[RMDB]
RNA sequence: GGGAACGACUCGAGUAGAGUCGAAAAGAGCUGGAGAGAAAACACGCCGAGAUCAAGCCUGGCCAGCCGGGGAGCGGUGUGCAGCGAGGCUCUGCUGCAGCUGCAGCCCAGUCGGCUGUGGACAGAGUCAUCCACUCAUAUUCGUAUGAGUGGAUGAAAAAGAAACAACAACAACAAC
Reactivity to DMS in 0.01 (KOAc 150mM, MgCl2 10mM, bicine 150mM(pH8.5), 24C), signal-to-noise 8, nucleotides 027 to 126: g000a100g020c030u000g000g010a070g010a130g000a100a080a100a130c060a050c070g010c030c020g000a090g010a110u010c120a090a170g000c030c010u000g000g000c020c030a070g010c020c040g010g010g010g000a180g010c040g020g020u000g010u000g020c020a030g000c030g010a200g010g000c070u010c090u010g010c000u000g000c020a180g000c000u000g010c030a130g000c020c000c010a140g010u010c020g010g000c000u000g010u000g000g000a090c070a050g000a110g000
Reactivity to 2A3 in 0.01 (KOAc 150mM, MgCl2 10mM, bicine 150mM(pH8.5), 24C), signal-to-noise 4, nucleotides 027 to 126: g050a010g000c010u030g030g020a080g010a010g030a120a140a030a040c040a010c040g030c020c010g050a050g010a070u120c050a100a020g040c020c000u020g030g000c000c010a010g010c020c010g000g000g000g030a070g030c070g000g000u180g130u060g130c010a010g010c010g040a040g070g020c040u020c090u260g000c010u000g000c020a020g000c010u010g000c010a080g020c000c010c000a020g150u080c010g000g000c000u030g010u060g010g010a030c040a050g060a010g100
Structure probing data (DMS and 2A3) for a 177-nucleotide construct. The RNA was probed in 150 mM KOAc, 10 mM MgCl2 and 150 mM bicine (pH 8.5) at 24 C. For 2A3 the reverse transcriptase was SuperScript II with manganese. The data come from the RNA Mapping Database (RMDB), library OK2TRN. DMS (dimethyl sulfate) methylates the pairing face of unpaired adenines and cytosines.